[RMDB]
RNA sequence: GGGAACGACUCGAGUAGAGUCGAAAAAAGUCACCCUCCUCGCAUCGCUAGUUCGUGCUUGCGACUUACACGUAGGGCGAGGGGUGGGCGAAAGUUGCCAUGAGACCGUAACUUUCGUAGUCAUUGAAAAACUACAAAGCCUUCGGGCUUUGUAGAACCGCUAAUUUCUCUUCGGAGAAAUUAGCGGAAAAGAAACAACAACAACAAC
Reactivity to 2A3 in 0.01 (KOAc 150mM, MgCl2 10mM, bicine 150mM(pH8.5), 24C), signal-to-noise 2, nucleotides 027 to 156: a000a000g210u100c040a040c040c000c010u040c030c000u000c020g000c020a110u060c000g050c030u050a010g050u100u250c110g140u290g090c010u040u050g020c010g030a000c020u070u130a010c060a030c070g170u140a110g020g130g000c000g000a000g010g020g000g020u190g000g020g000c000g010a000a000a000g000u000u000g000c020c020a040u010g090a030g020a300c020c010g000u010a000a000c000u000u000u000c000g000u000a010g100u030c060a030u060u100g050a110a060a020a000a020c000u000a000c000a000a000a000g000c000c000u020u130c270g060g020g010c000u030u030u000g000u000a000g000a000a000